[RMDB]
RNA sequence: GGGAACGACUCGAGUAGAGUCGAAAACCUUACUACUUCGGUAGUAAGGAAAAAAGCGUACUACACUCACCCAGCAAGGCUGUGGUCCCAAAUAGGACCAGAGCUGAUGACCUGGGUGAGGUGUAUCGCAAAAAAUCGACUGCUUCGGCAGUCGAAACUAUUACUCAAGCUUCGGCUUGAGUAAUAGAAAAGAAACAACAACAACAAC
Reactivity to DMS in 0.01 (KOAc 150mM, MgCl2 10mM, bicine 150mM(pH8.5), 24C), signal-to-noise 1, nucleotides 027 to 156: c000c000u000u000a000c000u010a010c000u000u010c300g070g020u010a020g020u010a000a000g000g010a000a010a060a160a100a100g000c000g010u000a080c020u010a020c000a030c010u010c020a010c000c000c010a020g000c000a080a160g020g010c000u000g040u010g000g000u010c000c000c030a020a230a280u000a080g040g000a040c000c000a050g000a010g070c000u010g010a070u000g000a060c300c010u000g000g000g000u000g000a000g010g020u000g000u000a090u000c020g040c030a010a030a030a070a070a130u000c000g010a030c010u010g000c010u000u010c280g030g000c000a000g000u000c010g000a000a050a120
Reactivity to 2A3 in 0.01 (KOAc 150mM, MgCl2 10mM, bicine 150mM(pH8.5), 24C), signal-to-noise 2, nucleotides 027 to 156: c010c000u010u020a000c000u000a000c000u000u050c160g090g000u000a000g000u000a000a000g000g000a050a040a020a000a090a050g040c040g030u080a050c070u030a000c120a000c000u010c000a000c000c000c000a000g000c030a060a110g040g000c010u030g060u010g300g050u080c000c000c030a280a300a200u260a100g000g000a010c000c010a010g030a000g010c010u010g020a080u100g020a020c000c030u000g000g000g000u010g000a000g000g010u010g000u010a000u020c020g000c000a130a090a100a000a000a040u020c000g000a000c000u000g000c000u050u070c260g090g000c020a000g000u000c000g000a000a000a000
An RNA of 207 nucleotides, treated with DMS and 2A3 and read out base by base. The RNA was probed in 150 mM KOAc, 10 mM MgCl2 and 150 mM bicine (pH 8.5) at 24 C. For 2A3 the reverse transcriptase was SuperScript II with manganese.